Source information
The record gives the reactivity of an RNA of 177 nucleotides to DMS and 2A3. The DMS profile rests on 2,041 reads. In probing experiments dimethyl sulfate is read out at A N1 and C N3, which are open when not base-paired. Values cover nucleotides 27 to 126. For 2A3 the reverse transcriptase was SuperScript II with manganese. The data come from the RNA Mapping Database (RMDB), library 15KREP. DMS adducts were read by reverse transcription with MarathonRT.
[RMDB]
RNA sequence: GGGAACGACUCGAGUAGAGUCGAAAAAAGUUGAUAUGGAUUUACUCCGAGGAGACGAACUACCACGAACAGGGGAAUCUCUACCCGUGGCGUCUCCGUUUGACGAGUAAGUCCUAAGUCAACAAAAGACUAUAUUUGAGUUCGCUCAAAUAUAGUCAAAAGAAACAACAACAACAAC
Reactivity to DMS in 0.01 (KOAc 150mM, MgCl2 10mM, bicine 150mM(pH8.5), 24C), signal-to-noise 3, nucleotides 027 to 126: a040a090g010u010u000g000a020u010a300u010g010g010a000u000u000u000a000c000u000c020c010g000a080g010g020a020g020a000c010g000a090a010c110u000a300c010c000a020c010g000a040a180c240a040g020g000g000g000a140a110u030c010u000c010u000a150c130c080c020g000u000g000g000c030g000u000c010u000c010c000g000u010u000u000g010a100c300g010a020g010u000a000a010g000u000c010c010u000a040a070g000u000c000a020a010c020a090a040a170a070
Reactivity to 2A3 in 0.01 (KOAc 150mM, MgCl2 10mM, bicine 150mM(pH8.5), 24C), signal-to-noise 2, nucleotides 027 to 126: a000a000g010u010u000g000a020u010a020u070g000g000a000u010u000u000a010c010u000c000c010g000a020g010g000a000g020a000c010g010a060a010c070u160a050c080c010a010c010g040a090a020c040a090g030g010g000g070a180a200u100c020u020c010u050a040c020c020c030g000u000g000g010c000g010u000c000u000c000c000g000u070u040u070g000a000c000g000a000g000u010a000a000g000u000c000c000u010a010a000g000u010c000a000a000c010a010a040a010a020
The RNA was probed in 150 mM KOAc, 10 mM MgCl2 and 150 mM bicine (pH 8.5) at 24 C.